[RMDB]
Notes: Conditions: 150 mM KOAc, 10 mM MgCl2 and 150 mM bicine (pH 8.5), 24 C. Structure probing data (DMS and 2A3) for a 177-nucleotide construct. For 2A3, 5,774 sequencing reads were counted. Reactivities are given for positions 27 through 126. The data come from the RNA Mapping Database (RMDB), library TTRDEL. For DMS the reverse transcriptase was MarathonRT.

RNA sequence: GGGAACGACUCGAGUAGAGUCGAAAAGAUAUGGACCCAUUAAGCCUCGACGAUCGUGUCUCGGAAACGAGAGCACGGGAGAGGUAUGGGUCCUAAGUCAAAACGUCGGAGCUUCGGCUCCGACGAAGAGAAUAAUCACGUUCGCGUGAUUAUUCUCAAAAGAAACAACAACAACAAC
Reactivity to DMS in 0.01 (KOAc 150mM, MgCl2 10mM, bicine 150mM(pH8.5), 24C), signal-to-noise 2, nucleotides 027 to 126: g000a010u000a020u000g010g000a000c000c000c000a000u010u020a060a230g020c010c000u000c000g000a090c290g000a020u010c000g010u000g010u010c000u000c000g010g010a010a010a020c010g020a000g000a090g020c010a010c000g010g010g010a010g000a010g010g010u010a000u010g000g010g020u000c000c000u000a010a040g010u000c000a060a060a130a160c030g020u000c000g000g000a010g020c000u000u030c210g030g000c000u000c000c000g000a000c000g000a030a040
Reactivity to 2A3 in 0.01 (KOAc 150mM, MgCl2 10mM, bicine 150mM(pH8.5), 24C), signal-to-noise 3, nucleotides 027 to 126: g000a000u010a010u080g020g000a010c010c010c030a030u210u250a240a160g220c030c020u120c090g290a300c030g010a170u010c010g000u000g000u000c000u000c000g000g000a000a000a000c000g000a000g000a030g120c000a000c000g010g000g010a000g000a000g000g010u020a000u000g010g020g000u000c000c000u000a000a000g000u000c000a050a050a040a080c010g010u010c000g000g000a020g010c010u180u170c300g190g000c010u070c020c010g000a000c000g000a000a010